[RMDB]
RNA sequence: GGGAACGACUCGAGUAGAGUCGAAAAAAGGCGUAGAUAACAAGUUCAUUAACAAGAAAAGCAAAGAGUCUCUUAACGGUUAAGAGCAUAGGGCACUUUACCUCUGAAACAAUGAGGUGCAUUAAACGAUAAAACGGGAGUUCGCUCCCGUUUUAUCAAAAGAAACAACAACAACAAC
Reactivity to DMS in 0.01 (KOAc 150mM, MgCl2 10mM, bicine 150mM(pH8.5), 24C), signal-to-noise 2, nucleotides 027 to 126: a030a040g000g000c060g010u010a030g000a140u020a060a050c120a070a140g000u000u000c020a050u000u000a060a080c120a030a060g000a040a060a040a080g040c070a050a150a130g010a160g000u020c000u010c030u050u000a020a190c220g000g000u010u000a020a000g020a010g010c040a080u030a040g000g000g000c060a060c100u020u020u010a050c000c000u000c010u000g010a130a160a090c190a080a050u030g000a020g000g020u000g000c110a100u020u010a010a110a110c160
Reactivity to 2A3 in 0.01 (KOAc 150mM, MgCl2 10mM, bicine 150mM(pH8.5), 24C), signal-to-noise 1, nucleotides 027 to 126: a000a000g050g000c000g000u010a010g050a160u030a110a090c030a020a220g000u070u090c010a080u230u140a060a000c020a000a000g100a050a060a000a000g030c000a000a080a000g150a050g100u000c020u000c000u060u060a050a000c020g300g000u040u060a000a000g000a000g010c000a000u140a010g000g010g010c050a000c050u000u000u020a000c000c000u000c000u000g000a020a050a000c000a040a140u140g000a000g050g000u000g020c000a000u100u100a050a010a010c060